[RMDB]
RNA sequence: GGGAACGACUCGAGUAGAGUCGAAAAGAUAUGGACCUGUCCGAUAAGCUGCACUCGGAAACGAGUGGCAGCUUUUGACGGUCAGGUCCUAAGUCAAAAGCAAAGGACCGUUCGCGGUCCUUUGCAACCUAUUUCGAUAGUUCGCUAUCGAAAUAGGAAAAGAAACAACAACAACAAC
Reactivity to 2A3 in 0.01 (KOAc 150mM, MgCl2 10mM, bicine 150mM(pH8.5), 24C), signal-to-noise 2, nucleotides 027 to 126: g000a000u030a000u060g000g000a000c000c000u010g010u000c000c000g060a150u090a300a040g020c000u030g010c020a000c000u000c000g000g020a030a010a000c000g000a000g010u040g040g060c010a000g020c040u000u010u000u020g010a000c000g000g000u010c010a000g010g010u000c000c000u000a000a010g000u010c010a020a010a090a060g000c010a010a000a010g000g000a010c000c000g050u090u100c300g040c000g100g000u000c000c000u000u010u010g000c000a000a000
Reactivity to DMS in 0.01 (KOAc 150mM, MgCl2 10mM, bicine 150mM(pH8.5), 24C), signal-to-noise 5, nucleotides 027 to 126: g000a020u000a170u010g000g000a020c000c000u000g000u000c000c000g010a120u010a050a030g020c000u000g010c000a020c000u000c000g010g000a040a040a090c000g010a020g010u000g010g020c000a010g010c000u000u000u000u010g000a240c050g000g000u000c010a000g000g000u000c000c000u000a000a060g000u010c020a090a080a130a150g000c000a010a020a000g000g000a010c000c010g020u010u010c200g030c010g000g000u000c000c000u000u010u000g000c000a030a040